This 207-nucleotide RNA was probed chemically with 2A3 and DMS. Values cover nucleotides 27 to 156. The DMS profile rests on 2,504 reads. It was measured as part of the RMDB library M2RFPK.
RNA sequence: GGGAACGACUCGAGUAGAGUCGAAAACCAUUCCUUAUACCUUGAGUAUUGCUGAAUUCAGUUUAGCGUGCAUGCUCUUGGCUAUUCUCAUAGUGAUUGUCAAAUUUGGAGUUACUAAUUCGUCAAUAAAACACUACCACGUUCGCGUGGUAGUGAACCUAUGCUCGUAGUUCGCUACGAGCAUAGGAAAAGAAACAACAACAACAAC
Reactivity to 2A3 in 0.01 (KOAc 150mM, MgCl2 10mM, bicine 150mM(pH8.5), 24C), signal-to-noise 4, nucleotides 027 to 156: c020c000a010u060u100c000c010u110u130a050u070a070c000c000u020u020g010a010g010u000a040u150u140g010c030u040g060a140a130u170u210c070a210g110u040u080u110a040g020c050g040u050g060c010a030u000g010c000u000c000u050u010g010g010c010u060a090u150u090c090u030c070a100u090a050g070u040g120a060u050u050g090u100c070a080a130a130u110u090u130g050g000a030g020u060u060a060c030u090a080a140u030u140c050g080u060c130a080a070u120a150a060a020a040c000a010c000u000a000c000c000a000c000g010u050u050c150g010c000g120u000g010g000u000a000g000u000g000a000a000
Reactivity to DMS in 0.01 (KOAc 150mM, MgCl2 10mM, bicine 150mM(pH8.5), 24C), signal-to-noise 2, nucleotides 027 to 156: c000c020a250u000u000c030c000u010u010a130u000a050c020c000u000u000g000a020g020u000a020u010u000g010c010u010g010a070a060u000u000c110a270g010u000u000u000a070g060c050g000u000g020c060a160u000g000c010u000c010u000u000g000g030c050u010a070u010u000c010u000c050a230u000a100g020u000g020a040u000u010g010u000c060a090a180a160u000u010u000g000g030a120g000u000u000a140c060u010a040a130u000u000c050g000u000c020a070a090u000a010a090a080a130c000a050c000u000a010c020c000a040c010g030u000u010c260g040c020g000u010g000g030u000a000g000u020g000a030a040